[RMDB]
RNA sequence: GGGAACGACUCGAGUAGAGUCGAAAAAGAAAAAGGAAUGAUUUUUGUUCUUGUAAAGUUAAUGCUGGGAACAAGCCAGUUGGUUUUCUAGCUGUUUCUUGGGACAGACUGAUGAGUUUGUGAGCUCUUAGGAGUCAGCAUGAUUUCCCAUUCAGCAUCAUACUGCCCUAUUCGUAGGGCAGUAUGAAAAAGAAACAACAACAACAAC
Reactivity to DMS in 0.01 (KOAc 150mM, MgCl2 10mM, bicine 150mM(pH8.5), 24C), signal-to-noise 1, nucleotides 027 to 156: a090g010a010a040a140a040a080g000g000a030a080u000g000a140u000u010u010u010u010g000u000u000c000u000u000g030u010a040a090a100g030u010u010a070a030u000g020c000u020g030g010g000a060a110c030a040a150g000c090c030a050g060u010u000g030g020u030u000u010u010c010u000a060g040c000u010g000u000u010u000c000u000u000g040g000g040a120c070a110g010a060c020u040g020a040u000g000a280g010u000u120u000g030u000g000a220g000c050u000c010u010u000a110g010g000a230g010u000c000a090g000c020a060u000g000a120u000u000u000c000c000c000a200u000u010c050a080g090c090a300
Reactivity to 2A3 in 0.01 (KOAc 150mM, MgCl2 10mM, bicine 150mM(pH8.5), 24C), signal-to-noise 1, nucleotides 027 to 156: a000g110a000a020a020a010a010g120g070a070a080u180g010a130u180u100u150u170u140g020u020u000c040u110u020g090u110a040a090a110g040u120u170a090a020u130g010c010u020g020g040g050a000a080c050a070a000g110c080c030a040g010u050u110g070g000u020u000u040u040c020u040a010g010c040u030g020u060u080u030c060u040u040g000g020g000a000c000a010g070a040c020u010g000a030u020g030a060g040u070u000u070g130u150g100a040g020c090u070c000u100u070a060g000g050a120g020u020c000a020g030c040a060u100g010a110u090u040u040c010c000c050a040u070u070c040a000g000c020a000